About this RNA:
The record gives the reactivity of an RNA of 177 nucleotides to 2A3.
[RMDB]
RNA sequence: GGGAACGACUCGAGUAGAGUCGAAAAGCAUCAUGGUUUAUUUAUGUAGUCUCGCUUUUGGACAAAACUAACCCACAGAUCUUUUAUUAUCCUUGUGCUUGUGGCAUUAUCCCCUGUCCAAUGCACAACCGCAUAUCGGCUUCGGCCGAUAUGCGGUAAAAGAAACAACAACAACAAC
Reactivity to 2A3 in 0.01 (KOAc 150mM, MgCl2 10mM, bicine 150mM(pH8.5), 24C), signal-to-noise 2, nucleotides 027 to 126: g010c000a030u000c030a030u040g000g000u000u020u150a130u000u100u050a150u110g030u030a120g020u020c050u090c040g210c050u130u090u110u300g030g000a010c000a010a170a010a000c030u010a000a000c030c020c020a030c020a020g000a040u000c000u000u080u010u050a150u120u100a140u100c010c050u000u040g030u000g020c020u030u050g040u170g080g020c030a000u090u000a130u180c000c000c000c000u000g010u000c000c010a030a000u200g000c000a000c010a030
Values cover nucleotides 27 to 126.
The data come from the RNA Mapping Database (RMDB), library RFM100.
The reactions ran in a buffer of 150 mM KOAc, 10 mM MgCl2 and 150 mM bicine (pH 8.5), at 24 C.